[RMDB]
RNA sequence: GGGAACGACUCGAGUAGAGUCGAAAAACUGUCAUAUACGUAUGACCGAAUGAGCAUAACAGGGCCACCCCAAAGCGUUCACAUUGUGGCCCCUGUCAGAUUCUGGUAAAUCUGCGAGUUCUGCUAAAUUAGGUAACUCUCUUCGGAGAGUUACCAAUCUAAUGACUUAGUUCGCUAAGUCAUUAGAAAAAGAAACAACAACAACAAC
Reactivity to DMS in 0.01 (KOAc 150mM, MgCl2 10mM, bicine 150mM(pH8.5), 24C), signal-to-noise 3, nucleotides 027 to 156: a060c040u000g010u010c010a030u000a060u000a080c220g040u010a020u000g010a020c000c050g010a120a100u010g010a140g000c050a090u000a060a080c030a040g010g030g010c030c020a050c020c020c030c040a060a080a130g030c040g010u000u000c080a090c080a140u000u000g010u000g020g020c060c020c010c010u000g010u000c020a030g010a030u000u000c050u010g010g030u010a040a030a030u010c010u000g010c030g020a200g020u000u000c120u000g010c020u010a040a070a120u000u000a080g020g000u000a000a010c000u000c000u000c000u000u000c290g040g000a020g010a020g010u010u000a000c000c000a000a020
Reactivity to 2A3 in 0.01 (KOAc 150mM, MgCl2 10mM, bicine 150mM(pH8.5), 24C), signal-to-noise 6, nucleotides 027 to 156: a000c010u000g000u000c000a000u030a000u010a050c170g080u020a020u020g010a000c000c020g080a120a130u170g040a080g000c030a030u040a100a010c000a020g000g010g000c010c000a010c010c020c010c050a070a090a050g090c090g080u180u150c060a110c050a190u160u170g000u000g000g000c020c010c000c010u040g060u070c000a010g010a060u110u000c030u230g080g000u050a040a040a020u010c000u010g000c020g030a070g030u040u030c050u050g010c020u060a050a130a140u220u140a090g000g000u000a000a000c000u000c000u010c000u070u060c140g040g000a000g000a000g000u000u000a000c000c000a000a000
Source information
The data come from the RNA Mapping Database (RMDB), library M2RFPK. Structure probing data (DMS and 2A3) for a 207-nucleotide construct. 2A3 adducts were read by reverse transcription with SuperScript II with manganese. Values are in units of 0.01, from 0 to 300, in steps of 10.